[RMDB]
RNA sequence: GGGAACGACUCGAGUAGAGUCGAAAAAUCAAGCUGAGUGUGCACAUGCCCUGUUUAACACCAGGCUGUCCAGUGUCAGUUCCCUCGUAGGCUGUUGAUUUAUGAGAUAGCCUCUUCCUAUGUUCACAUAUAAUUACAGCAACGAGAGCUGAUAUGAGCUCAGCAGUAAUUUCGAUUACUGCUGAGCAAAAGAAACAACAACAACAAC
Reactivity to DMS in 0.01 (KOAc 150mM, MgCl2 10mM, bicine 150mM(pH8.5), 24C), signal-to-noise 2, nucleotides 027 to 156: a110u020c060a040a090g030c000u000g000a110g070u000g030u000g000c100a160c130a150u010g020c050c010c020u000g000u000u000u010a070a090c040a160c120c030a150g000g020c050u000g020u000c060c060a160g000u000g000u030c010a020g000u010u000c050c030c010u000c060g040u020a120g010g030c000u000g010u000u010g040a240u000u000u000a050u010g000a180g020a100u000a040g030c000c040u010c140u010u000c030c010u010a070u000g000u000u000c020a080c030a070u000a070u030a030a190u000u010a070c000a030g030c010a170a100c040g000a070g010a110g000c020u010g000a050u000a060u000g010a190
Background: The record gives the reactivity of an RNA of 207 nucleotides to DMS. It was measured as part of the RMDB library OK3TST. The DMS profile rests on 2,742 reads. For DMS the reverse transcriptase was MarathonRT.